The data come from the RNA Mapping Database (RMDB), library OK1LIB. Structure probing data (2A3) for a 177-nucleotide construct.
RNA sequence: GGGAACGACUCGAGUAGAGUCGAAAAGCACGUCGUUACGACGACGUGCAAGAAAACAAAAGGAGUGGCGAGCCCUGGCCACAGUGAAUCAAACAGGGUAAAAGCAUGGUGGUACGCCACCAUGCAAGUCGAGUCAUCAGUUCGCUGAUGACUCGACAAAAGAAACAACAACAACAAC
Reactivity to 2A3 in 0.01 (KOAc 150mM, MgCl2 10mM, bicine 150mM(pH8.5), 24C), signal-to-noise 2, nucleotides 027 to 126: g000c000a020c000g010u000c000g000u010u030a030c200g010a000c010g000a000c000g000u000g020c000a000a000g000a000a120a000a000c060a000a120a030a010g150g150a300g070u000g000g010c010g000a080g000c000c000c000u000g000g020c000c000a000c000a000g060u000g030a000a040u220c090a040a000a000c000a000g000g000g000u060a100a200a000a010g020c000a000u000g000g010u000g000g000u060a070c300g100c030c000a010c000c000a000u010g000c010a000a000

About this RNA:
The reactions ran in a buffer of 150 mM KOAc, 10 mM MgCl2 and 150 mM bicine (pH 8.5), at 24 C.